[RMDB]
An RNA of 177 nucleotides, treated with DMS and 2A3 and read out base by base. Conditions: 150 mM KOAc, 10 mM MgCl2 and 150 mM bicine (pH 8.5), 24 C. DMS adducts were read by reverse transcription with MarathonRT. For 2A3, 4,348 sequencing reads were counted.
RNA sequence: GGGAACGACUCGAGUAGAGUCGAAAAUGGACGUUGUUCGCAACGUCCACAUACUGAGAGGUACGUUAAACGUAUCGCGGGCAAAAGUGCAGUUAGAAUAAGUACCUAUUGAGUUCGCUCAAUAGAACCAAUGAACGAGAUUCGUCUCGUUCAUUGGAAAAGAAACAACAACAACAAC
Reactivity to DMS in 0.01 (KOAc 150mM, MgCl2 10mM, bicine 150mM(pH8.5), 24C), signal-to-noise 4, nucleotides 027 to 126: u000g010g020a010c010g010u000u000g020u000u000c170g020c020a010a000c010g020u000c000c010a010c130a060u000a050c050u000g000a140g020a120g010g000u000a010c020g020u000u010a060a110a170c010g010u000a010u000c000g000c110g020g010g000c120a020a060a080a070g030u000g020c030a040g000u000u000a090g010a120a050u010a040a100g010u000a110c150c010u000a010u000u000g000a020g020u000u010c170g020c010u000c010a010a000u000a020g010a080a130
Reactivity to 2A3 in 0.01 (KOAc 150mM, MgCl2 10mM, bicine 150mM(pH8.5), 24C), signal-to-noise 4, nucleotides 027 to 126: u060g000g010a000c000g000u010u010g010u050u050c140g000c120a000a000c000g000u000c010c000a000c000a000u040a000c010u090g050a030g000a030g080g010u000a000c010g020u060u280a220a220a030c010g020u020a010u020c010g000c050g000g050g000c040a080a040a050a020g090u110g060c040a020g040u070u170a060g050a190a100u190a280a030g070u030a070c010c010u000a000u000u000g010a010g040u030u110c250g010c060u030c000a000a020u020a000g010a030a010

Description
2A3 is a SHAPE reagent: it acylates the 2'-hydroxyl of flexible nucleotides of all four kinds. For 2A3 the reverse transcriptase was SuperScript II with manganese.